[RMDB]
RNA sequence: GGGAACGACUCGAGUAGAGUCGAAAAAAGUCGCUCUCUCUCGCCCCAUACAUCCUCUCAGGCAUAGAGAUGACCAUUUGCCUAGGGUGAGUCUUUAAGUAGACACAGCCUAUCUAUGGCGAUGUAUCGGGGCACGGGUUUUAACACCCCCAUGACGCAUUAGCGAUAUCUUCGGAUAUCGCUAAUGAAAAGAAACAACAACAACAAC
Reactivity to 2A3 in 0.01 (KOAc 150mM, MgCl2 10mM, bicine 150mM(pH8.5), 24C), signal-to-noise 2, nucleotides 027 to 156: a000a000g100u040c020g010c020u010c000u000c000u010c040u060c130g010c000c010c000c000a000u000a000c000a000u000c000c000u040c020u090c220a020g000g000c000a000u050a040g120a020g040a120u150g090a130c010c060a130u040u040u030g000c000c000u000a010g000g000g010u000g020a020g010u010c010u020u160u060a300a300g280u130a080g040a000c030a000c000a020g020c000c000u110a140u250c080u060a060u190g000g000c000g010a000u000g000u000a010u040c160g000g000g010g000c000a000c000g000g000g020u010u030u050u120a130a070c080a060c000c010c000c030c040a160u160g070a060c060g000
Reactivity to DMS in 0.01 (KOAc 150mM, MgCl2 10mM, bicine 150mM(pH8.5), 24C), signal-to-noise 2, nucleotides 027 to 156: a020a040g030u000c010g020c000u030c020u010c020u010c130u000c010g040c000c010c010c020a040u000a030c040a060u000c010c010u000c040u000c150a080g000g000c010a090u010a060g020a130g020a170u010g000a110c020c040a220u010u000u000g060c000c030u000a070g030g010g030u030g010a270g000u010c000u000u010u010a170a240g010u000a020g030a010c000a140c040a150g050c000c010u000a180u010c200u000a100u020g020g020c010g060a020u000g000u000a050u000c110g040g000g030g040c020a010c030g010g030g020u010u000u000u000a100a160c100a070c030c000c000c000c020a040u000g000a170c160g020
The record gives the reactivity of an RNA of 207 nucleotides to 2A3 and DMS. 2A3 adducts were read by reverse transcription with SuperScript II with manganese. 2A3 is a SHAPE reagent: it acylates the 2'-hydroxyl of flexible nucleotides of all four kinds. For DMS the reverse transcriptase was MarathonRT. Conditions: 150 mM KOAc, 10 mM MgCl2 and 150 mM bicine (pH 8.5), 24 C.